[RMDB]
RNA sequence: GGGAACGACUCGAGUAGAGUCGAAAAAGUGAGUGGAAAGCGUCCCUACAGGCUGCCCAAAGGGAGAGUUCGUUUCCCAUAUCGGGUGCGUUGCUGGACACAGUGAUUGCCGAGGAGGCGAGUGCACCUAGUCGAAAAUAUUCGUAUUUUCGACUAGAAAAGAAACAACAACAACAAC
Reactivity to 2A3 in 0.01 (KOAc 150mM, MgCl2 10mM, bicine 150mM(pH8.5), 24C), signal-to-noise 6, nucleotides 027 to 126: a000g160u110g060a030g000u050g040g030a110a050a020g030c020g050u030c010c000c000u020a050c030a050g020g050c020u060g020c010c020c000a060a050a030g050g020g000a090g000a020g040u150u170c050g060u080u080u020c010c010c000a020u070a040u110c070g020g010g000u030g010c020g050u050u090g010c020u010g010g020a030c070a010c000a130g010u040g070a110u080u150g020c000c010g010a050g120g030a020g010g000c020g010a020g020u050g030c000a020c010
Reactivity to DMS in 0.01 (KOAc 150mM, MgCl2 10mM, bicine 150mM(pH8.5), 24C), signal-to-noise 9, nucleotides 027 to 126: a080g020u000g000a090g020u010g010g000a100a100a100g010c070g010u000c020c020c010u000a110c100a100g010g010c030u000g010c030c010c030a060a130a130g010g010g010a120g000a030g010u010u010c080g010u000u000u000c000c000c030a120u010a080u010c160g000g010g010u000g010c050g010u000u000g010c010u000g000g010a200c300a090c040a050g010u000g000a080u000u010g020c020c020g000a150g010g000a230g000g000c020g010a050g020u000g010c040a050c080
Structure probing data (2A3 and DMS) for a 177-nucleotide construct. The reactions ran in a buffer of 150 mM KOAc, 10 mM MgCl2 and 150 mM bicine (pH 8.5), at 24 C. For DMS, 27,352 sequencing reads were counted. DMS adducts were read by reverse transcription with MarathonRT. For 2A3, 12,711 sequencing reads were counted.